[RMDB]
RNA sequence: GGGAACGACUCGAGUAGAGUCGAAAAUAACUGUGAUUAUAAAAGUGGAGUACUAAAGUACCCACUACCUUUAAUCACAGACAAUAAAGGUCCAAAUAAAAUAAAAAUAAAUAAAUAGUUAGUCUUCGGAUUAGCAAAAGAAACAACAACAACAAC
Reactivity to 2A3 in 0.01 (KOAc 150mM, MgCl2 10mM, bicine 150mM(pH8.5), 24C), signal-to-noise 3, nucleotides 027 to 135: u090a030a020c020u000g000u000g000a000u000u000a000u020a040a020a050a000g000u000g000g050a280g030u000a000c030u280a220a170a080g000u000a000c020c000c000a000c000u000a030c020c000u040u000u000a000a000u000c000a010c000a000g020a000c050a010a060u190a140a090a010g050g020u030c030c020a040a080a040u150a050a070a040a000u250a050a090a100a050a010u300a090a100a010u210a150a210a090u100a150g060u010u020a010g010u000c010u040u060c280g080g000a020u020u000a000g020c030a140
This 155-nucleotide RNA was probed chemically with 2A3. Conditions: 150 mM KOAc, 10 mM MgCl2 and 150 mM bicine (pH 8.5), 24 C.